[RMDB]
RNA sequence: GGGAACGACUCGAGUAGAGUCGAAAAGUAGAACUCGUUUGGAUAUCCAGCACACAGGCUAUUCGGCAAGGUGGACAGCUUCAUUUCCAAGAUCAUCUCCGCCUUCUGCAACUUGCUGUUGGGCAAGCUGAUAAUAGGACUUCGGUCCUAUUAUCAGAAAAGAAACAACAACAACAAC
Reactivity to DMS in 0.01 (KOAc 150mM, MgCl2 10mM, bicine 150mM(pH8.5), 24C), signal-to-noise 5, nucleotides 027 to 126: g020u020a050g010a060a090c020u010c060g010u020u010u020g010g000a070u010a040u000c030c040a070g010c070a070c070a080c120a070g000g020c060u010a060u010u010c070g000g010c070a040a060g010g030u010g000g010a060c110a100g000c060u000u010c090a080u010u010u010c050c050a090a100g010a090u010c070a120u030c120u000c020c020g000c070c010u020u010c060u000g000c100a090a130c040u000u000g000c020u000g020u010u000g000g000g000c050a040a040g000
Reactivity to 2A3 in 0.01 (KOAc 150mM, MgCl2 10mM, bicine 150mM(pH8.5), 24C), signal-to-noise 9, nucleotides 027 to 126: g110u080a020g020a110a040c030u020c090g090u040u080u130g050g010a040u040a060u110c020c010a020g030c040a030c010a010c010a050g050g000c010u060a050u110u100c040g030g010c030a020a030g040g010u020g000g030a030c030a040g020c020u040u030c030a120u100u070u050c040c020a040a020g030a100u100c030a060u020c030u010c030c010g010c010c000u050u060c030u070g040c030a050a050c010u010u020g000c000u010g040u080u020g000g000g010c010a010a010g020